[RMDB]
RNA sequence: GGGAACGACUCGAGUAGAGUCGAAAAUCAGUGUAUUUUCAGUGUCUUUUUGAUGAUUAAUGAGAAUACCCGCACGAUACUGUUUAUCACUGCUUUCUUUAGCAAACCACUCUAUGCUGAGGCGGGAAUUAGUCAGCUGAUUCGUCAGCUGACUAAUAAAAGAAACAACAACAACAAC
Reactivity to 2A3 in 0.01 (KOAc 150mM, MgCl2 10mM, bicine 150mM(pH8.5), 24C), signal-to-noise 2, nucleotides 027 to 126: u010c000a000g000u000g040u070a100u040u010u000u010c010a040g010u010g010u040c050u020u200u140u230u210g070a090u060g030a070u070u220a280a070u250g060a030g090a050a000u070a180c000c000c060g050c010a040c060g020a030u030a020c000u030g030u020u050u010a030u030c000a010c030u010g080c080u070u080u030c030u050u120u070a020g060c020a070a020a030c000c030a100c030u050c020u050a120u130g080c040u110g070a030g000g080c050g010g060g050a020
Reactivity to DMS in 0.01 (KOAc 150mM, MgCl2 10mM, bicine 150mM(pH8.5), 24C), signal-to-noise 3, nucleotides 027 to 126: u000c040a030g000u010g010u010a010u000u000u000u000c000a010g010u000g000u000c000u010u010u010u000u000g000a130u010g010a090u000u010a100a090u000g010a200g000a080a050u000a100c010c030c050g030c080a110c150g000a060u000a020c030u000g010u000u000u000a030u000c050a050c040u000g000c270u000u000u000c040u000u020u010a050g000c120a060a080a160c080c050a050c120u000c070u010a070u010g040c150u010g010a060g010g000c050g020g000g000a080